This 177-nucleotide RNA was probed chemically with DMS and 2A3. DMS adducts were read by reverse transcription with MarathonRT. Reactivities are given for positions 27 through 126. The RNA was probed in 150 mM KOAc, 10 mM MgCl2 and 150 mM bicine (pH 8.5) at 24 C.
[RMDB]
RNA sequence: GGGAACGACUCGAGUAGAGUCGAAAAACUAGUAUAUACAGGGGUGAGUUGACCUGUCAUCUAGACUGCUGACCAUCAACUCACCGGUCAGCUGGAUGAUGUCCACAGAGUACGACAUCAGUACUCAGUGAAUGGAUGCGUUCGCGUAUCUAUUCACAAAAGAAACAACAACAACAAC
Reactivity to DMS in 0.01 (KOAc 150mM, MgCl2 10mM, bicine 150mM(pH8.5), 24C), signal-to-noise 9, nucleotides 027 to 126: a130c030u000a040g010u020a060u030a070u030a050c050a050g000g010g000g010u000g000a030g010u000u000g000a040c080c080u020g000u000c070a040u010c000u010a080g010a160c110u010g000c050u000g000a020c010c260a250u020c070a020a040c080u010c060a040c120c070g000g000u010c060a060g000c000u000g000g010a100u010g000a060u010g000u000c010c040a110c200a100g000a040g010u000a020c040g010a140c190a110u040c130a070g010u000a020c000u000c020a130
Reactivity to 2A3 in 0.01 (KOAc 150mM, MgCl2 10mM, bicine 150mM(pH8.5), 24C), signal-to-noise 9, nucleotides 027 to 126: a000c030u030a020g100u040a090u030a000u030a130c030a030g060g010g030g040u050g020a040g020u020u020g040a040c010c050u020g020u000c000a020u010c000u030a060g150a230c080u050g010c010u010g010a000c000c020a020u060c020a030a060c030u020c060a040c020c010g000g010u010c020a010g010c010u020g020g020a060u080g020a020u070g080u040c020c010a080c040a080g020a010g030u040a010c060g090a030c090a130u100c010a040g010u010a010c010u010c030a010